[RMDB]
RNA sequence: GGGAACGACUCGAGUAGAGUCGAAAAGAUAUGGACCAUUCGUUGGGUUCGAAGAACUCGGAAACGAGGGAGAAUAGACGAGAUGGUCCUAAGUCAAAACGGUUGCGAUCUUCGGAUCGCAACCGAAGUUGACGAACAAGUUCGCUUGUUCGUCAACAAAAGAAACAACAACAACAAC
Reactivity to 2A3 in 0.01 (KOAc 150mM, MgCl2 10mM, bicine 150mM(pH8.5), 24C), signal-to-noise 2, nucleotides 027 to 126: g010a010u070a030u180g000g000a000c010c000a010u020u000c010g010u010u040g300g250g000u020u030c040g040a140a020g030a070a040c000u000c000g000g040a050a080a060c000g000a020g000g000g060a030g000a020a010u030a000g030a010c010g000a030g060a300u010g020g000u020c000c000u000a020a000g020u010c030a020a010a070a180c000g000g000u020u000g000c000g020a010u020c010u100u180c300g030g000a010u000c010g000c010a010a000c000c000g000a000a010
Reactivity to DMS in 0.01 (KOAc 150mM, MgCl2 10mM, bicine 150mM(pH8.5), 24C), signal-to-noise 2, nucleotides 027 to 126: g010a040u000a300u000g000g040a010c000c000a010u000u000c000g020u000u000g000g010g020u000u000c030g000a140a170g020a160a140c010u000c020g020g040a150a050a210c000g000a020g010g020g000a090g000a010a000u000a300g000a010c020g010a030g010a020u000g000g000u010c000c000u000a030a060g020u000c000a120a070a080a140c040g010g020u000u000g000c000g000a000u000c000u000u020c160g000g000a000u000c000g000c000a000a000c000c000g000a000a000
The record gives the reactivity of an RNA of 177 nucleotides to 2A3 and DMS. For DMS the reverse transcriptase was MarathonRT. The RNA was probed in 150 mM KOAc, 10 mM MgCl2 and 150 mM bicine (pH 8.5) at 24 C. Reactivities are given for positions 27 through 126.